Chemical mapping of a 177-nucleotide RNA with DMS and 2A3. For DMS the reverse transcriptase was MarathonRT. Source: RMDB library OK2TST, as collected in RNAgym. The 2A3 profile rests on 3,941 reads.

RNA sequence: GGGAACGACUCGAGUAGAGUCGAAAAAUUACUUUUUUUUUUGCAUGUAUUUGAUUUGGGGGACAAUAAUAUAGUCACACUGCUUGAUGAAAAUGUCUCAGUGAUCUACUUUGGGAACACACAUGAGCAACAAAUACUCAUUCGUGAGUAUUUGUUGAAAAGAAACAACAACAACAAC
Reactivity to DMS in 0.01 (KOAc 150mM, MgCl2 10mM, bicine 150mM(pH8.5), 24C), signal-to-noise 6, nucleotides 027 to 126: a070u020u010a110c050u020u010u000u000u000u000u000u000u010u010g010c030a030u000g010u000a060u010u000u010g010a090u000u000u000g010g010g010g010g010a020c020a020a020u010a030a030u000a090u010a230g010u000c020a040c090a110c210u010g010c240u000u000g000a020u000g000a180a100a080a020u000g000u000c010u000c010a110g010u010g010a050u000c010u000a050c140u010u000u010g010g000g000a050a060c070a050c080a030c050a050u000g000a110g020
Reactivity to 2A3 in 0.01 (KOAc 150mM, MgCl2 10mM, bicine 150mM(pH8.5), 24C), signal-to-noise 4, nucleotides 027 to 126: a000u100u080a180c050u210u120u060u010u020u030u040u030u120u150g040c000a010u030g010u130a150u060u130u180g130a110u070u130u210g120g010g000g000g020a000c030a010a020u080a080a000u050a020u050a090g030u020c000a000c010a010c140u090g040c050u010u050g020a010u010g010a010a020a010a030u040g000u000c000u000c030a020g030u020g030a030u010c020u040a080c070u080u140u130g090g000g050a100a010c040a000c010a010c010a080u070g050a020g130